Structure probing data (2A3 and DMS) for a 177-nucleotide construct. For DMS the reverse transcriptase was MarathonRT. For DMS, 3,568 sequencing reads were counted.

RNA sequence: GGGAACGACUCGAGUAGAGUCGAAAAACUACGUGAUCGGUUCUUAUCCAGCUUCAAACAGCCUGGUCGAUUUCGGGCUGAGUUGGAGAAAGUGAAGCUAAUACUGAAGAGGAAAGGUCAUGAGUAAACAACUCUUAAACUUCGGUUUAAGAGUUGUAAAAGAAACAACAACAACAAC
Reactivity to 2A3 in 0.01 (KOAc 150mM, MgCl2 10mM, bicine 150mM(pH8.5), 24C), signal-to-noise 3, nucleotides 027 to 126: a000c020u260a110c020g020u020g010a020u000c020g010g140u030u010c020u060u040a060u050c040c040a010g020c020u030u040c020a010a090a080c000a000g000c000c000u030g040g030u060c090g150a230u070u110u210c010g000g000g000c000u000g030a060g050u010u020g010g000a030g000a050a060a000g130u120g070a040a010g130c060u060a050a070u090a280c040u040g050a070a030g020a040g060g000a020a000a000g000g000u000c000a000u020g010a020g030u070a060a170
Reactivity to DMS in 0.01 (KOAc 150mM, MgCl2 10mM, bicine 150mM(pH8.5), 24C), signal-to-noise 4, nucleotides 027 to 126: a090c030u010a110c040g040u010g010a010u000c010g020g030u000u000c020u010u000a170u000c080c020a050g010c000u010u000c040a040a060a080c010a020g000c000c000u010g010g000u010c190g000a230u000u010u000c020g020g000g000c010u000g010a050g010u000u000g010g010a030g010a100a080a130g010u010g010a120a100g010c100u000a080a100u010a170c040u000g000a060a170g000a060g010g000a020a030a070g000g000u000c000a020u000g000a070g010u000a050a130